An RNA of 177 nucleotides, treated with DMS and 2A3 and read out base by base.
Reactivities are given for positions 27 through 126.
It was measured as part of the RMDB library OK1LIB.
Conditions: 150 mM KOAc, 10 mM MgCl2 and 150 mM bicine (pH 8.5), 24 C.
The DMS profile rests on 1,558 reads.
Reactivities are rounded to 0.1 and cut off at 0 and 3.

[RMDB]
RNA sequence: GGGAACGACUCGAGUAGAGUCGAAAAUAUAUUUCAGAUGAGUAGACUGCGCCAGCCCCAUCUGGCCGAACAUAUCUGAUGAGGGAAACGGCCCGAACCAGUCCACCUGGGAUGAGGCCAGCAGCACAGGCAUCAUCGUAUUCGUACGAUGAUGCCUAAAAGAAACAACAACAACAAC
Reactivity to DMS in 0.01 (KOAc 150mM, MgCl2 10mM, bicine 150mM(pH8.5), 24C), signal-to-noise 2, nucleotides 027 to 126: u000a030u050a090u020u020u000c000a060g020a060u000g000a180g030u000a030g000a170c120u020g050c210g010c000c020a020g030c080c040c080c020a140u000c010u000g000g010c000c070g000a040a020c140a040u010a070u000c030u000g010a000u020g000a190g000g010g010a010a070a120c110g030g000c070c000c000g060a020a130c050c020a010g000u040c110c200a140c290c000u000g000g000g000a060u000g020a220g010g010c000c000a190g000c210a110g000c170a030c210
Reactivity to 2A3 in 0.01 (KOAc 150mM, MgCl2 10mM, bicine 150mM(pH8.5), 24C), signal-to-noise 1, nucleotides 027 to 126: u230a020u040a030u000u030u020c010a030g030a110u070g020a000g090u100a020g050a200c060u040g030c040g000c010c010a050g020c000c000c000c000a040u100c000u000g070g000c000c000g000a060a010c100a060u180a110u090c060u040g040a030u080g020a250g040g060g110a040a160a140c090g020g000c010c000c000g000a000a060c000c000a040g070u030c060c120a130c070c000u000g000g010g000a100u210g020a060g010g000c060c000a000g000c000a000g000c000a030c000